[RMDB]
RNA sequence: GGGAACGACUCGAGUAGAGUCGAAAACGAGGGAAAUUAUCACUACCUCGGCUCCUAGUGAUAAUUUCGGAGCACGGUUAUCGGUACGGUGGACAUGCGAAAGCAUGUCCAUCGUACUGAUAACCGAGCAGGUACUAGGGUUCGCCCUAGUACCUGCAAAAGAAACAACAACAACAAC
Reactivity to DMS in 0.01 (KOAc 150mM, MgCl2 10mM, bicine 150mM(pH8.5), 24C), signal-to-noise 1, nucleotides 027 to 126: c030g000a140g010g000g000a000a050a000u000u000a000u000c010a020c010u000a140c140c050u000c040g020g000c080u010c030c050u000a040g010u000g000a000u000a010a060u000u000u000c040g020g000a140g030c150a170c010g010g000u000u000a000u000c010g000g000u000a000c000g020g000u000g020g020a000c000a020u000g000c020g010a130a120a120g020c000a010u010g000u000c000c000a000u000c000g020u000a010c000u000g000a010u000a000a000c020c000g000a000